Structure probing data (2A3 and DMS) for a 177-nucleotide construct. The DMS profile rests on 2,170 reads. For 2A3 the reverse transcriptase was SuperScript II with manganese. DMS (dimethyl sulfate) methylates the pairing face of unpaired adenines and cytosines. DMS adducts were read by reverse transcription with MarathonRT. Source: RMDB library TTRDEL, as collected in RNAgym. Conditions: 150 mM KOAc, 10 mM MgCl2 and 150 mM bicine (pH 8.5), 24 C.
RNA sequence: GGGAACGACUCGAGUAGAGUCGAAAAGAUAUGGAUGUCGCAACAGCUACUGUGUCGGAAACGACAUGUAGACAUGCGGAUCCUAAGUCAAAACAACGUCCUCGUACUUCGGUACGAGGACGUUGAACCGUAAUACCGUGUUCGCACGGUAUUACGGAAAAGAAACAACAACAACAAC
Reactivity to 2A3 in 0.01 (KOAc 150mM, MgCl2 10mM, bicine 150mM(pH8.5), 24C), signal-to-noise 2, nucleotides 027 to 126: g040a000u060a050u160g030g000a020u080g180u300c010g000c010a030a140c050a300g080c010u000a030c070u160g030u010g000u110c010g020g000a090a040a030c010g000a000c000a000u050g000u010a020g070a150c020a100u060g000c010g020g020a010u010c010c000u010a150a000g060u080c040a020a030a080a190c000a000a030c020g020u000c000c000u010c000g000u000a010c020u030u080c300g090g010u000a000c000g010a000g000g000a000c000g000u000u000g010a000a000
Reactivity to DMS in 0.01 (KOAc 150mM, MgCl2 10mM, bicine 150mM(pH8.5), 24C), signal-to-noise 2, nucleotides 027 to 126: g010a010u000a300u020g010g000a000u000g000u000c000g000c000a040a110c250a180g010c000u000a000c010u000g060u020g020u000c000g000g000a070a030a210c000g030a000c000a020u000g000u010a000g000a040c070a170u000g010c000g000g000a010u000c010c000u000a020a100g010u000c050a110a080a070a260c000a020a000c000g000u000c000c000u000c000g000u000a010c000u000u010c120g020g000u000a000c000g040a010g000g000a000c000g000u000u000g000a030a160